[RMDB]
RNA sequence: GGGAACGACUCGAGUAGAGUCGAAAACGCAAAGCUGCAGCGCGGCGCUCUGGAGGCCUUGCCCCGCGCACUGCUCUUUACAUGUCCCGACGUGAGGGCACUUCGCGGGCAGUGCUGCGGCCUCGUGAAACUGCCCCUAAGUUCGCUUAGGGGCAAACAUUGUAAAUGAGUUCGCUCAUUUACAAUGAAAAGAAACAACAACAACAAC
Reactivity to 2A3 in 0.01 (KOAc 150mM, MgCl2 10mM, bicine 150mM(pH8.5), 24C), signal-to-noise 4, nucleotides 027 to 156: c040g000c020a030a030a010g010c000u010g000c020a010g010c000g010c030g070g030c070g070c080u080c070u190g250g050a080g080g000c010c020u040u100g030c020c000c000c000g010c000g000c010a010c010u010g000c000u010c010u030u120u180a050c020a050u120g090u100c030c050c080g050a070c060g020u030g010a040g000g000g000c000a000c010u040u030c020g000c000g010g010g000c010a020g010u030g000c000u000g000c000g000g000c000c000u020c000g000u010g010a110a050a030c060u050g010c000c000c020c000u000a000a010g000u030u110c120g040c130u000u000a000g000g010g000g000c000a000a000a000
Reactivity to DMS in 0.01 (KOAc 150mM, MgCl2 10mM, bicine 150mM(pH8.5), 24C), signal-to-noise 3, nucleotides 027 to 156: c030g010c020a070a060a080g010c040u000g000c020a050g020c030g030c020g020g000c050g020c040u000c060u010g040g010a200g010g000c010c040u000u000g010c060c020c000c020g020c060g030c060a030c030u010g010c010u000c000u000u010u000a100c040a130u010g000u000c050c040c060g000a150c130g030u000g010a080g020g010g030c010a050c040u000u000c030g020c080g010g020g020c030a110g030u000g000c010u000g000c020g010g020c010c010u000c060g010u000g010a130a050a100c070u010g010c010c000c000c010u000a020a040g020u000u010c300g030c000u000u000a020g020g010g040g040c000a000a000a030